[RMDB]
The record gives the reactivity of an RNA of 307 nucleotides to DMS. Values cover nucleotides 27 to 266. The RNA was probed in 150 mM KOAc, 10 mM MgCl2 and 150 mM bicine (pH 8.5) at 24 C.

RNA sequence: GGGAACGACUCGAGUAGAGUCGAAAAGAAAAAAAGCCUAUCAGGUAAGGUCUAACCAACCGCCUGUACCGAGUCCUUGGAACUGAAGUGGUAACACCAGGUUUAAGCGUAGGACAGGGAGCAACAGAGCCGAAACGAAAGUGAAGCGAUUGAGCUGGGAAAUUAGUAUGAGGUUGGAAAUGGUCGAUGUGUUGUAUUACACAGUAGACAACACUGCUGUAACCGCUACGGUGAGGUUAUGGCGGCAUCCCCCAGUCUGAGAGCUAAAAAGGUCCUUCGGGACCUUUAAAAGAAACAACAACAACAAC
Reactivity to DMS in 0.01 (KOAc 150mM, MgCl2 10mM, bicine 150mM(pH8.5), 24C), signal-to-noise 2, nucleotides 027 to 266: g040a020a000a030a130a100a110a210g030c050c040u010a280u010c010a020g000g000u000a020a020g000g000u000c010u000a040a020c030c000a300a010c000c000g010c000c000u000g010u000a000c020c000g010a130g000u000c000c000u000u000g000g000a000a010c010u020g000a140a190g020u000g000g000u040a110a180c010a040c010c020a300g000g000u010u010u000a080a130g010c110g020u000a040g000g000a020c040a250g000g010g030a040g000c040a030a180c130a080g000a240g010c030c020g000a070a090a040c010g000a130a110a130g000u000g000a250a140g000c030g000a160u000u010g010a300g010c010u020g020g000g010a120a040a050u000u020a030g020u000a070u000g010a030g010g000u000u050g000g010a070a030a030u010g000g000u000c020g000a100u000g020u000g000u000u000g020u020a060u000u000a020c020a030c020a030g000u020a080g000a000c010a060a000c120a030c000u020g000c000u000g010u000a030a000c010c000g040c210u020a030c060g020g000u000g000a010g020g000u000u000a000u010g000g000c030g000g000c040a030u020c050c060c060c030c000a080g000u010c030u000g010a090g000a100g000c030u000a030a060